[RMDB]
RNA sequence: GGGAACGACUCGAGUAGAGUCGAAAAGGGUUUGAGCCAUCGCCCGAAUAUGAUGGUUGAUACAAGUCGGCAUUGUACGCGACGUAGUACGUACUCAUUAGUGCGAAAGCACGGUUAGUCCGACUUGGCAGGGACGAUCUUCUGUCAAUACUUAGAAGCAUCCGUAAUUAUUCGUAAUUACGGAUGCAAAAGAAACAACAACAACAAC
Reactivity to 2A3 in 0.01 (KOAc 150mM, MgCl2 10mM, bicine 150mM(pH8.5), 24C), signal-to-noise 5, nucleotides 027 to 156: g040g010g010u070u050u120g060a010g000c010c010a010u000c000g010c020c000c040g050a090a080u250a130u170g010a000u000g030g000u030u050g050a040u060a160c050a040a020g000u000c010g000g040c050a060u010u140g010u050a020c040g060c090g050a080c110g020u020a050g030u040a030c010g000u000a010c000u030c060a070u090u110a040g000u000g000c010g040a080a030a010g000c000a000c000g030g040u060u070a020g020u000c010c000g000a000c000u000u010g000g000c010a010g030g010g000a040c080g110a170u040c030u150u040c010u040g030u010c010a030a070u130a200c090u120u130a060g030a170a000
Reactivity to DMS in 0.01 (KOAc 150mM, MgCl2 10mM, bicine 150mM(pH8.5), 24C), signal-to-noise 3, nucleotides 027 to 156: g010g020g030u000u000u010g000a130g000c020c060a080u000c030g010c020c030c040g030a080a090u010a060u000g020a090u000g030g000u000u000g020a130u000a070c050a030a050g030u000c000g040g010c030a230u000u010g020u010a020c020g010c010g000a150c180g040u000a180g030u010a020c000g030u010a010c000u000c160a110u010u010a110g050u000g000c000g000a100a100a260g010c000a010c000g010g000u000u000a120g020u000c020c010g010a030c010u000u000g000g040c020a060g020g020g020a120c030g020a110u000c080u000u000c030u010g010u000c060a110a110u010a100c070u010u000a090g000a200a300